About this RNA
An RNA of 207 nucleotides, treated with DMS and 2A3 and read out base by base. DMS adducts were read by reverse transcription with MarathonRT. 2A3 adducts were read by reverse transcription with SuperScript II with manganese.
RNA sequence: GGGAACGACUCGAGUAGAGUCGAAAAGGUUCCUCAGCUAUCCCGAAAGUUGUUAUUUUCCAUGCGAAGUGUGUCGCAUCACUUUCGACUUGGUGGAGACUUACAAUAUCGAUUUAGUGAACCCUGGAGAAGGUGGGCGGAAAAGGGAGAGGAGUUGCUCUAAAUCAUAAUUCGUUAUGAUUUAGAGAAAAGAAACAACAACAACAAC
Reactivity to DMS in 0.01 (KOAc 150mM, MgCl2 10mM, bicine 150mM(pH8.5), 24C), signal-to-noise 4, nucleotides 027 to 156: g020g010u000u000c000c020u000c030a200g010c030u000a100u010c020c010c000g010a150a150a180g030u000u000g000u010u000a100u000u000u000u000c030c020a120u020g020c010g030a070a170g030u000g010u000g020u010c110g000c080a120u000c020a030c020u010u000u000c030g030a120c040u000u010g020g020u000g010g020a110g010a090c070u000u000a060c070a070a110u010a100u000c060g020a170u000u000u000a070g010u000g000a090a100c020c020c020u000g000g010a240g000a070a050g000g030u000g020g010g000c070g020g020a040a030a060a060g010g010g000a140g020a100g000g010a100g000u000u010g010
Reactivity to 2A3 in 0.01 (KOAc 150mM, MgCl2 10mM, bicine 150mM(pH8.5), 24C), signal-to-noise 6, nucleotides 027 to 156: g060g020u050u050c010c000u040c010a030g010c030u100a090u090c020c010c020g090a130a100a100g040u020u020g000u030u020a080u040u070u020u020c020c010a030u050g040c020g030a050a060g100u090g050u050g080u230c030g000c070a040u060c000a010c000u040u050u040c040g060a130c050u040u070g040g020u050g030g110a090g030a050c020u060u060a030c060a090a080u050a120u230c090g090a150u060u090u160a020g000u030g080a080a070c010c000c020u020g020g010a070g010a020a010g030g020u030g000g050g050c100g020g000a060a050a020a020g030g010g010a060g000a020g030g020a060g030u060u120g030